[RMDB]
RNA sequence: GGGAACGACUCGAGUAGAGUCGAAAACAUUCAAAUAAAUUAUCGCAUGCCUAUUUAUUUGAAGGUGAUGAUGCACAAACGAUGAAACAAGUUGCGAUUAAUUUUGCAAAGCUUAUUUUAUGUCAAACCGGAUGUAAUGAUUCGUCAUUACAUCCGGAAAAGAAACAACAACAACAAC
Reactivity to 2A3 in 0.01 (KOAc 150mM, MgCl2 10mM, bicine 150mM(pH8.5), 24C), signal-to-noise 6, nucleotides 027 to 126: c020a040u030u030c010a000a010a030u050a020a000a000u100u140a110u210c090g020c160a060u130g060c010c020u100a010u030u030u000a030u010u000u030g010a010a030g030g050u000g010a090u060g010a040u120g090c070a030c050a080a130a040c060g060a030u100g090a070a050a010c030a030a050g050u040u020g010c010g000a010u020u150a220a090u120u170u050u040g020c020a050a080a000g020c000u040u000a070u120u130u090u030a080u110g160u070c050a020a040a070
Reactivity to DMS in 0.01 (KOAc 150mM, MgCl2 10mM, bicine 150mM(pH8.5), 24C), signal-to-noise 2, nucleotides 027 to 126: c000a170u000u000c010a000a000a010u020a000a000a010u020u030a120u040c120g010c130a050u010g000c060c100u000a010u000u000u010a000u010u000u020g000a010a050g000g010u000g010a090u010g000a090u000g000c130a010c090a120a010a070c130g030a040u020g000a020a010a040c130a030a090g020u020u010g000c000g000a010u000u010a020a080u020u000u000u000g020c000a060a050a060g000c000u000u000a020u030u010u000u000a050u000g000u000c060a030a070a180